About this RNA
The record gives the reactivity of an RNA of 177 nucleotides to DMS and 2A3. The reactions ran in a buffer of 150 mM KOAc, 10 mM MgCl2 and 150 mM bicine (pH 8.5), at 24 C. For 2A3 the reverse transcriptase was SuperScript II with manganese. Values cover nucleotides 27 to 126. For 2A3, 1,178 sequencing reads were counted.
RNA sequence: GGGAACGACUCGAGUAGAGUCGAAAACAUCUUGCAUAAGAUGCUGUCGUGCUUAUUUUGAGCGAAUGAAACUCCUCAAUUCUGCCGAAGAAGGGGGAUCCUAGGUUUCAACUAGUUACUCUCUCAGGAGUGGGUAUGUUUUCGAACAUACCCACUCAAAAGAAACAACAACAACAAC
Reactivity to DMS in 0.01 (KOAc 150mM, MgCl2 10mM, bicine 150mM(pH8.5), 24C), signal-to-noise 3, nucleotides 027 to 126: c010a040u000c020u010u000g010c300a150u000a050a030g000a040u000g020c100u000g010u010c020g020u010g010c030u000u000a090u010u000u000u020g010a020g000c090g010a090a100u010g010a090a080a170c110u000c010c010u010c040a080a100u000u000c060u000g030c070c030g010a100a040g020a080a080g000g030g000g020g000a020u000c300c010u000a000g010g010u010u000u010c140a090a150c030u000a040g010u000u010a140c120u000c020u000c030u000c080a120g000
Reactivity to 2A3 in 0.01 (KOAc 150mM, MgCl2 10mM, bicine 150mM(pH8.5), 24C), signal-to-noise 2, nucleotides 027 to 126: c000a000u010c000u020u050g040c040a100u100a300a020g010a020u040g010c040u040g080u010c040g060u100g070c000u070u120a140u110u290u110u060g010a020g060c060g000a000a030u100g040a160a080a050c040u030c010c000u020c000a030a000u040u070c020u070g060c000c030g050a060a050g040a060a060g080g000g000g000g000a000u000c010c020u010a040g050g010u070u270u200c050a060a070c010u000a000g020u050u030a040c040u020c000u000c000u000c030a050g180